[RMDB]
RNA sequence: GGGAACGACUCGAGUAGAGUCGAAAAAUGAGCUUUCGAGCUCAUUAGUAGGGGUCUCCCGAGCUCCCUUAAGACAUGCUGAAGCCUCCACGGCAACAGCUUAAUGGGAGCGAUGAGGGAGACGGAGGCACCCAUUGUCUCGUCAUUCGUGACGAAAUAUAUCUUUCAUUUUCGAAUGAAAGAUAUAAAAAGAAACAACAACAACAAC
Reactivity to 2A3 in 0.01 (KOAc 150mM, MgCl2 10mM, bicine 150mM(pH8.5), 24C), signal-to-noise 5, nucleotides 027 to 156: a000u010g000a000g020c030u100u120u230c270g130a010g010c000u000c000a000u020u010a010g010u050a020g000g090g020g020u010c000u000c000c000c000g010a010g000c000u010c000c000c000u000u040a070a040g090a080c070a170u260g000c020u020g030a080a040g010c020c010u260c300c140a130c120g010g000c010a030a020c010a010g000c000u000u030a030a030u150g000g000g000a010g000c010g010a130u140g070a120g000g000g000a000g000a000c000g000g030a010g020g010c040a070c040c000c020a050u080u190g090u040c040u010c030g020u010c010a080u130u100c200g140u060g000a000c020g020a000a120a010
Reactivity to DMS in 0.01 (KOAc 150mM, MgCl2 10mM, bicine 150mM(pH8.5), 24C), signal-to-noise 6, nucleotides 027 to 156: a010u000g000a020g010c010u000u000u000c290g020a050g030c000u000c000a020u000u000a060g030u000a100g020g000g010g010u000c000u000c000c000c010g020a120g020c010u000c000c000c000u000u000a040a060g010a150c090a200u000g000c000u000g010a070a300g010c030c010u000c110c190a280c270g010g000c000a050a230c030a070g010c010u000u000a020a070u000g020g020g010a030g020c000g010a040u000g000a150g000g020g010a050g000a030c040g010g010a050g050g020c040a150c010c010c020a300u000u000g000u000c030u000c010g010u010c010a080u000u000c200g040u010g020a020c010g000a040a100a210